[RMDB]
RNA sequence: GGGAACGACUCGAGUAGAGUCGAAAAGCAGAUUGGCAUCGAUCCGCCGCGCGGCGUGCUUAUGUACGGUCCGCCCGGUUGCGGCAAGACCAUGUUGGCCAAGGCGGUGGCCCAUCAUACGACGGCAGAUGGUAGGUGCAUUCGUGCACCUACCAUCAAAAGAAACAACAACAACAAC
Reactivity to DMS in 0.01 (KOAc 150mM, MgCl2 10mM, bicine 150mM(pH8.5), 24C), signal-to-noise 2, nucleotides 027 to 126: g030c030a130g000a090u000u000g010g020c070a080u000c070g000a090u010c020c200g010c000c010g020c300g010c020g000g030c030g020u000g010c050u000u010a100u000g000u000a060c060g030g000u010c030c020g000c030c060c010g040g010u010u000g000c090g000g000c040a150a060g010a080c020c010a090u000g010u000u000g000g020c010c000a070a160g000g010c000g030g000u000g000g000c020c010c020a050u000c070a050u000a080c100g010a030c070g010g000c150a160
Reactivity to 2A3 in 0.01 (KOAc 150mM, MgCl2 10mM, bicine 150mM(pH8.5), 24C), signal-to-noise 1, nucleotides 027 to 126: g080c060a010g140a210u040u090g020g000c000a040u010c160g060a080u040c000c000g050c020c000g030c020g030c030g020g000c010g040u030g010c000u260u280a180u260g090u060a000c030g050g040u040c000c000g070c000c000c000g170g000u130u150g040c030g020g000c010a050a040g050a050c030c050a000u180g080u100u080g030g000c000c000a000a000g050g000c000g000g060u050g060g000c000c010c010a040u040c010a000u020a070c110g060a010c030g040g070c070a050